[RMDB]
RNA sequence: GGGAACGACUCGAGUAGAGUCGAAAAGAUAUGGAUCUGAAGCAGCAUCGAUCUCAGCUCGGAAACGAGCUGAGGGGAGCUGAUAAGGAUCCUAAGUCAAAGUUGUGAGACUUCGGUCUCACAACAAUCGUAGGUACUACUUCGGUAGUACCUACGAAAAAGAAACAACAACAACAAC
Reactivity to DMS in 0.01 (KOAc 150mM, MgCl2 10mM, bicine 150mM(pH8.5), 24C), signal-to-noise 3, nucleotides 027 to 126: g020a040u010a300u000g000g000a000u000c000u000g020a140a300g000c000a010g000c000a050u010c030g010a100u000c000u000c000a000g000c000u000c000g000g000a030a110a160c000g010a010g020c000u010g010a000g000g010g030g000a050g010c010u000g010a020u010a200a300g000g000a000u000c000c000u000a010a070g000u000c080a090a120a090g000u000u000g000u010g010a020g020a000c000u010u020c260g040g010u010c000u000c000a020c000a000a000c000a040a030
Reactivity to 2A3 in 0.01 (KOAc 150mM, MgCl2 10mM, bicine 150mM(pH8.5), 24C), signal-to-noise 2, nucleotides 027 to 126: g030a030u040a050u140g010g010a000u000c020u070g030a300a040g060c020a000g020c020a230u300c040g080a300u030c010u020c010a000g000c000u020c000g000g040a040a070a070c000g000a010g030c000u000g000a020g000g010g040g020a020g020c000u030g030a020u020a030a030g010g000a000u000c000c000u000a070a010g020u000c060a180a080a110g030u000u010g020u000g010a000g000a000c000u070u140c300g120g000u030c000u000c000a000c000a000a000c000a000a060